[RMDB]
RNA sequence: GGGAACGACUCGAGUAGAGUCGAAAAUGUUUUUUCAAGGGGGAAGUUCCCUCUUUGGUGAGUUGUAUAAUGCCCUCUUACUCUGACACAGGAAUGACCCUCCCGGCACAGAAGUGUAUAUUGGAUGUCGGAGUAUCAAUUUCGAUUGAUACUCCGAAAAAGAAACAACAACAACAAC
Reactivity to DMS in 0.01 (KOAc 150mM, MgCl2 10mM, bicine 150mM(pH8.5), 24C), signal-to-noise 2, nucleotides 027 to 126: u030g010u000u010u000u000u010u000c010a070a070g030g010g000g010g010a120a150g010u010u000c010c010c000u000c040u000u010u020g030g040u010g000a080g010u000u000g000u010a060u000a070a110u010g010c020c010c010u000c100u000u000a070c040u000c040u010g000a090c070a050c130a090g010g000a050a070u000g000a190c100c020c010u000c030c000c030g020g000c030a050c030a100g000a050a070g010u000g010u000a090u010a110u000u010g000g000a130u010g000